Chemical mapping of a 177-nucleotide RNA with DMS and 2A3.
The DMS profile rests on 4,282 reads.
The RNA was probed in 150 mM KOAc, 10 mM MgCl2 and 150 mM bicine (pH 8.5) at 24 C.
The 2A3 profile rests on 7,044 reads.
Source: RMDB library TTRDES, as collected in RNAgym.
[RMDB]
RNA sequence: GGGAACGACUCGAGUAGAGUCGAAAAAAAAAGAUAUGGAAUAGAUCGAGCUGUGAACUACGAGGACCGUGUCGGAAACGACACUAGUACUCGCACAGCUAAGACAGUCUAUUCCUAAGUCAAAAAAUCAGAUAGUAUAGUUCGCUAUACUAUCUGAAAAAGAAACAACAACAACAAC
Reactivity to DMS in 0.01 (KOAc 150mM, MgCl2 10mM, bicine 150mM(pH8.5), 24C), signal-to-noise 4, nucleotides 027 to 126: a050a070a080a110a090g000a020u000a300u010g010g000a060a000u020a010g000a010u000c060g000a070g030c010u010g010u000g000a070a050c160u020a300c030g010a010g000g020a080c300c210g000u000g000u010c000g000g000a050a050a130c000g010a010c000a010c010u000a030g020u000a100c000u000c010g000c020a000c000a010g000c010u000a060a060g000a110c300a050g010u000c000u000a010u000u000c000c000u000a020a080g010u000c000a000a020a070a100a100a080
Reactivity to 2A3 in 0.01 (KOAc 150mM, MgCl2 10mM, bicine 150mM(pH8.5), 24C), signal-to-noise 2, nucleotides 027 to 126: a010a000a000a030a050g060a040u090a020u090g000g000a010a000u000a010g020a020u190c060g030a030g030c000u010g010u020g030a130a120c140u300a070c300g010a000g020g010a010c030c000g000u010g000u010c010g000g020a060a050a040c000g000a000c010a000c000u010a000g000u010a000c010u000c000g000c010a010c000a000g000c010u030a080a010g010a000c020a000g030u000c000u000a010u000u000c000c000u010a100a030g020u010c030a070a030a060a080a010a150